[RMDB]
RNA sequence: GGGAACGACUCGAGUAGAGUCGAAAAGGUAAAGGCUCACCAAGGCGAUGAUACAUAGCCGACCUGAGAGGGUGAUCGGCCACAUUGGGACUGAGACACGGCCCAAACUCCUACGGGAGGCAGCAGUAGGGAAUCUUCGGCAAUGGACGAAAGUCUGGUGGAAGUAUAUCUUCGGAUAUACUUCCACAAAAGAAACAACAACAACAAC
Reactivity to 2A3 in 0.01 (KOAc 150mM, MgCl2 10mM, bicine 150mM(pH8.5), 24C), signal-to-noise 4, nucleotides 027 to 156: g050g020u100a090a080a050g010g000c010u020c050a040c000c050a050a040g040g010c050g040a030u080g030a020u070a110c090a070u150a040g000c000c020g030a040c010c010u060g000a060g030a020g050g030g000u070g060a130u070c020g000g020c020c020a050c010a080u050u080g030g000g000a080c020u040g050a030g020a080c050a020c100g030g010c000c000c000a000a090a090c030u050c000c000u020a050c120g040g000g000a030g010g000c030a010g000c010a000g020u060a030g030g000g020a020a050u050c030u090u060c040g010g000c000a050a130u140g020g020a040c040g030a120a030a030g010u030c040u110g020
Reactivity to DMS in 0.01 (KOAc 150mM, MgCl2 10mM, bicine 150mM(pH8.5), 24C), signal-to-noise 2, nucleotides 027 to 156: g000g010u000a040a100a180g010g020c010u000c000a180c030c020a050a260g040g020c060g030a100u010g020a180u000a060c090a150u000a150g020c040c010g030a070c010c020u010g020a100g030a100g000g020g010u000g030a120u000c010g020g010c010c020a050c070a120u000u000g000g030g000a090c040u030g000a130g010a080c070a140c070g000g000c000c010c010a060a040a100c040u000c020c030u000a110c110g050g000g000a090g010g010c050a020g050c020a060g010u010a070g010g010g020a100a080u000c020u000u000c040g030g010c080a100a170u000g010g000a040c040g000a120a090a120g000u000c030u000g000

An RNA of 207 nucleotides, treated with 2A3 and DMS and read out base by base. The data come from the RNA Mapping Database (RMDB), library PDB130. Values cover nucleotides 27 to 156.